RNA sequence: GGGAACGACUCGAGUAGAGUCGAAAACGCCUACAACUUGCACGACUACUGUACUUAUGGAUGAUCGAAAGGGUCCUCGCAUGGCUGCCUUGCAUUGCACAUACAGCACGUGUGUGGGUAGACAAGACGACACUGCAUGUCCCCAGUAUAUAUAUUGCUGGCAUUCUUAAUUCGUUAAGAAUGCCAGAAAAGAAACAACAACAACAAC
Reactivity to 2A3 in 0.01 (KOAc 150mM, MgCl2 10mM, bicine 150mM(pH8.5), 24C), signal-to-noise 6, nucleotides 027 to 156: c040g050c020c000u050a050c040a110a040c040u050u140g020c060a010c050g050a030c030u090a020c020u070g020u100a030c020u140u120a070u130g030g030a040u040g040a060u070c070g080a070a100a080g060g010g000u020c000c000u040c040g070c050a090u090g040g000c020u030g040c020c040u020u040g020c030a060u060u110g050c030a020c000a060u140a040c030a050g050c080a050c140g010u030g000u020g010u040g040g010g010u020a040g020a040c030a040a030g050a020c050g020a010c020a020c080u070g000c040a040u090g040u030c010c000c000c000a000g060u030a020u020a010u010a020u030a040u280u300g050
Reactivity to DMS in 0.01 (KOAc 150mM, MgCl2 10mM, bicine 150mM(pH8.5), 24C), signal-to-noise 2, nucleotides 027 to 156: c070g000c000c000u000a060c050a050a120c050u000u000g000c030a080c040g030a190c050u020a080c040u030g050u000a070c070u010u000a140u000g020g010a080u000g000a050u000c050g000a110a090a120g020g010g030u000c000c070u000c060g020c060a090u010g020g040c000u010g030c020c030u000u000g030c010a110u000u000g030c040a000c070a070u000a080c020a130g080c080a190c100g110u010g020u010g060u000g030g020g040u000a060g010a090c010a040a040g010a200c030g030a060c050a070c060u000g000c020a230u000g000u010c000c010c000c020a080g010u010a090u000a100u000a150u000a150u000u010g000